[RMDB]
RNA sequence: GGGAACGACUCGAGUAGAGUCGAAAACAGUUGAGGCGGUGAACAGGGAGCGGAAGGUGUCGCAGCUGCAGGCGCAGGAGGAGAUGACGGACUAUGAGGGCCGCUGGGCCACAACGGUGGCGAAGAACGGUAAUUAACACUUCGGUGUUAAUUACCGAAAAGAAACAACAACAACAAC
Reactivity to 2A3 in 0.01 (KOAc 150mM, MgCl2 10mM, bicine 150mM(pH8.5), 24C), signal-to-noise 1, nucleotides 027 to 126: c000a040g010u070u090g120a060g060g000c030g020g010u080g040a100a000c010a010g050g030g000a020g010c020g000g020a080a020g070g030u070g000u070c050g040c020a000g000c000u080g020c050a020g110g000c070g000c050a020g000g070a030g010g060a050g010a020u080g040a060c040g000g000a010c020u030a100u230g040a100g000g050g000c010c020g020c030u050g010g100g000c010c020a010c000a120a000c040g070g000u020g010g020c030g020a020a000g050a140a010
Reactivity to DMS in 0.01 (KOAc 150mM, MgCl2 10mM, bicine 150mM(pH8.5), 24C), signal-to-noise 3, nucleotides 027 to 126: c120a080g010u000u000g000a120g010g010c060g010g050u000g000a120a090c130a080g010g010g010a100g040c090g030g040a050a100g010g020u000g030u000c060g060c060a110g030c060u020g010c050a040g010g020c110g000c070a080g000g000a100g010g000a080g010a110u000g010a120c080g000g000a050c140u000a060u000g000a100g010g030g000c040c030g000c090u010g000g000g010c000c000a030c100a060a080c100g010g010u000g010g010c040g000a070a060g030a100a110